Notes: This 177-nucleotide RNA was probed chemically with 2A3. The data come from the RNA Mapping Database (RMDB), library RFM100. The 2A3 profile rests on 986 reads. The RNA was probed in 150 mM KOAc, 10 mM MgCl2 and 150 mM bicine (pH 8.5) at 24 C.
[RMDB]
RNA sequence: GGGAACGACUCGAGUAGAGUCGAAAAACUACCGUCCUGUACGCAGGACGGUAGAGGGGAUAUUGCACAUUACUAAGUUGCAUGUUGUCACGGCCUCAAUGCAAUUUAGUGUGUGUGAUAUUCUCAACUGAAGCAUCCACUUCGGUGGAUGCUUCAGAAAAGAAACAACAACAACAAC
Reactivity to 2A3 in 0.01 (KOAc 150mM, MgCl2 10mM, bicine 150mM(pH8.5), 24C), signal-to-noise 2, nucleotides 027 to 126: a000c000u010a000c000c000g000u000c010c000u030g020u050a040c200g000c050a000g000g000a000c000g000g000u000a000g000a000g000g000g000g000a000u000a000u000u010g000c010a010c000a030u210u300a060c060u000a000a030g000u000u000g030c010a010u010g050u030u080g100u120c070a040c200g210g000c020c000u000c070a130a070u010g000c000a020a000u000u000u000a000g000u000g010u000g000u000g000u020g000a000u000a000u000u020c000u000c000a000a040